[RMDB]
RNA sequence: GGGAACGACUCGAGUAGAGUCGAAAAUUUCAAAACCAUAGAAAGUAAAACCAUGGAUGAGAGAGGACAAUGGUAGAUUCACAGGUUUUGUUAAUAGGUAUUUGAAACAUGCCCAUUUGAUGAUUUUUUCCUCUGUGAACUAAGAUGUAAGGCCAUAUACUAGGCAGUAGUUCGCUACUGCCUAGUAAAAAGAAACAACAACAACAAC
Reactivity to DMS in 0.01 (KOAc 150mM, MgCl2 10mM, bicine 150mM(pH8.5), 24C), signal-to-noise 1, nucleotides 027 to 156: u000u000u000c030a020a050a150a150c040c030a060u000a150g000a110a100a150g030u000a050a120a090a050c000c060a120u010g020g040a100u030g020a170g040a200g030a090g030g000a060c150a090a090u000g030g050u000a100g000a140u000u000c010a030c000a080g000g040u010u010u000u000g000u000u000a060a150u000a030g010g010u010a030u000u020u000g030a160a040a120c230a070u000g010c000c030c030a160u000u000u010g040a060u010g010a000u000u000u000u000u000u000c020c040u020c050u000g040u000g020a050a090c010u010a050a090g010a100u010g020u000a060a050g000g020c020c040a000u010a140
Reactivity to 2A3 in 0.01 (KOAc 150mM, MgCl2 10mM, bicine 150mM(pH8.5), 24C), signal-to-noise 2, nucleotides 027 to 156: u040u070u030c000a000a000a000a020c020c010a070u070a080g130a070a180a020g060u150a050a070a000a010c010c000a070u020g010g010a020u090g020a020g010a000g010a040g120g000a000c110a150a020u040g120g000u040a070g090a160u100u050c000a010c040a060g050g000u020u050u060u040g030u100u120a080a050u020a130g070g000u050a170u030u060u140g080a080a070a000c010a000u040g010c010c010c000a030u070u120u060g090a040u010g010a010u120u090u030u020u090u050c030c000u100c020u040g040u030g010a000a000c050u040a100a000g020a050u100g050u130a010a140g070g000c000c000a020u000a000
Structure probing data (DMS and 2A3) for a 207-nucleotide construct. Reactivities are given for positions 27 through 156. It was measured as part of the RMDB library OK3TST. For 2A3, 661 sequencing reads were counted.